RNA sequence: GGGAACGACUCGAGUAGAGUCGAAAAGGGGUCUCCCAAAGCGAUCCGCAGAUACCAAGCCGAGGAAUGCUGAAGCCUCCACGGCAUUCCGUUUGACGCUUGGAGUAGGAUCGCGAUGGGAGACGGAGGCACCCAAACCACUACUUCGGUAGUGGAACGAUAUGAAAAUCUUCGGAUUUUCAUAUCGAAAAGAAACAACAACAACAAC
Reactivity to 2A3 in 0.01 (KOAc 150mM, MgCl2 10mM, bicine 150mM(pH8.5), 24C), signal-to-noise 3, nucleotides 027 to 156: g010g000g010g000u000c010u000c000c000c000a010a020a000g010c000g000a000u000c010c010g140c300a010g000a020u020a030c000c000a010a000g000c000c010g040a110g010g000a000a010u000g000c000u030g020a100a020g000c000c000u000c000c000a020c010g010g010c000a000u000u040c010c010g000u090u060u150g090a010c020g000c000u000u000g020g000a000g000u010a030g000g000a000u000c000g000c000g000a010u050g000g000g000a000g000a000c000g000g000a000g000g010c000a040c000c000c000a040a050a040c000c000a000c000u010a000c000u040u060c210g130g010u000a000g000u000g000g000a000a020
Reactivity to DMS in 0.01 (KOAc 150mM, MgCl2 10mM, bicine 150mM(pH8.5), 24C), signal-to-noise 2, nucleotides 027 to 156: g000g010g030g040u000c000u000c000c000c000a050a120a300g000c000g010a000u000c000c000g050c130a250g020a090u000a050c000c010a020a060g000c000c010g000a300g000g010a020a000u010g000c010u000g010a030a110g020c000c010u000c010c020a300c010g010g010c000a010u000u000c000c000g010u000u010u010g020a130c120g000c010u000u000g010g000a050g010u000a040g030g030a030u000c000g040c000g000a060u000g020g000g000a030g030a010c020g010g010a030g060g060c030a110c000c000c000a050a150a190c000c010a020c010u010a000c000u000u000c300g040g010u000a010g030u000g000g010a010a050